The data come from the RNA Mapping Database (RMDB), library OK2TRN. This 177-nucleotide RNA was probed chemically with DMS and 2A3. For DMS the reverse transcriptase was MarathonRT. For DMS, 8,342 sequencing reads were counted.
[RMDB]
RNA sequence: GGGAACGACUCGAGUAGAGUCGAAAACGGGCGACAAGCGCGCGAUCGCCUGGCUCGAGGACGCGGGCCGCUCGCAGGACAAGCUGUUCGGCUAUCUCGGCGCGCUCUUUUCCGGCGCGAAGGAGCACUAAAUUACUCACUUCGGUGAGUAAUUUAGAAAAGAAACAACAACAACAAC
Reactivity to DMS in 0.01 (KOAc 150mM, MgCl2 10mM, bicine 150mM(pH8.5), 24C), signal-to-noise 5, nucleotides 027 to 126: c050g000g000g000c000g010a050c130a080a120g010c010g000c030g020c020g010a210u000c010g010c020c020u000g010g010c070u000c060g010a080g010g010a090c110g010c040g020g000g010c020c020g010c200u010c080g020c050a070g010g010a070c110a100a120g010c090u010g010u000u000c070g020g010c020u000a070u000c090u000c030g020g010c040g000c040g020c010u000c020u000u000u000u000c050c040g010g020c020g010c020g000a090a080g010g000a060g030c140a260
Reactivity to 2A3 in 0.01 (KOAc 150mM, MgCl2 10mM, bicine 150mM(pH8.5), 24C), signal-to-noise 3, nucleotides 027 to 126: c000g010g030g000c010g020a050c060a210a070g080c030g020c010g000c030g070a070u020c020g020c010c040u030g050g000c030u030c050g070a060g050g030a050c060g000c020g040g050g010c010c020g000c010u040c040g000c040a040g010g070a050c040a080a050g050c050u070g090u110u090c020g050g000c020u040a060u100c070u010c040g010g020c030g020c020g000c030u000c000u050u070u050u030c030c030g070g010c010g000c020g020a020a040g070g020a050g020c010a010